[RMDB]
RNA sequence: GGGAACGACUCGAGUAGAGUCGAAAACUGUGUUUCGACACAGCAGAUUCCUAAGUCAAGACAGGUCCCAUGGUGAUUCGAUAAGUGUCGGAAACGACACUUUUGACGAAUGUGGGAUAUUGGUCUUGAUAUGGAUUAGUACUGCGUUCGCGCAGAAACACAGCAAUGACUUCGGUCAUUGCUGUGUAAAAGAAACAACAACAACAAC
Reactivity to DMS in 0.01 (KOAc 150mM, MgCl2 10mM, bicine 150mM(pH8.5), 24C), signal-to-noise 1, nucleotides 027 to 156: c000u000g020u000g000u000u000u000c160g040a080c010a020c010a000g000c000a100g050a300u010u000c010c030u020a170a300g030u010c020a040a050g010a020c020a080g000g020u010c000c000c010a080u000g020g010u000g030a230u000u000c020g000a130u000a010a010g030u000g030u000c000g000g060a200a080a220c030g020a010c000a020c030u000u010u020u020g030a160c070g000a050a050u000g000u010g020g000g020a090u000a050u000u000g000g030u010c010u000u030g010a020u010a160u000g020g000a100u000u000a090g010u000a130c020u020g030c000g010u000u000c160g030c060g000c040a030g000a130a140
An RNA of 207 nucleotides, treated with DMS and read out base by base. DMS adducts were read by reverse transcription with MarathonRT. The reactions ran in a buffer of 150 mM KOAc, 10 mM MgCl2 and 150 mM bicine (pH 8.5), at 24 C. Values are in units of 0.01, from 0 to 300, in steps of 10.